[RMDB]
RNA sequence: GGGAACGACUCGAGUAGAGUCGAAAACCUAUCCAAAGUGAGAUCCCAUCUUGCACACUGUGCUAAUUUGAGAUUCUCAUGCCUCCUACUUGGAGAGAUCUGGACUAGAAGUCAGGGCAUCUGACUCAAUACAUUCGUCAGUUCGCUGACGAAUGAAGUUUUCUGUUCACUUCGGUGAACAGAAAACAAAAGAAACAACAACAACAAC
Reactivity to 2A3 in 0.01 (KOAc 150mM, MgCl2 10mM, bicine 150mM(pH8.5), 24C), signal-to-noise 3, nucleotides 027 to 156: c000c000u000a030u010c010c000a060a070a100g000u000g000a000g000a010u010c000c010c010a010u010c010u010u010g000c010a010c030a080c210u300g000u000g000c040u130a080a050u000u010u010g040a040g000a030u250u090c000u000c000a000u030g030c020c000u010c000c000u160a300c110u170u300g000g000a000g000a010g010a050u050c070u070g030g000a030c020u060a090g050a140a000g070u000c000a000g050g030g210c110a160u120c030u010g000a000c000u000c010a060a020u050a100c020a010u000u010c020g000u000c010a030g030u010u150c190g040c130u000g000a010c000g020a010a000u000g000a100a000
Notes:
This 207-nucleotide RNA was probed chemically with 2A3. The RNA was probed in 150 mM KOAc, 10 mM MgCl2 and 150 mM bicine (pH 8.5) at 24 C.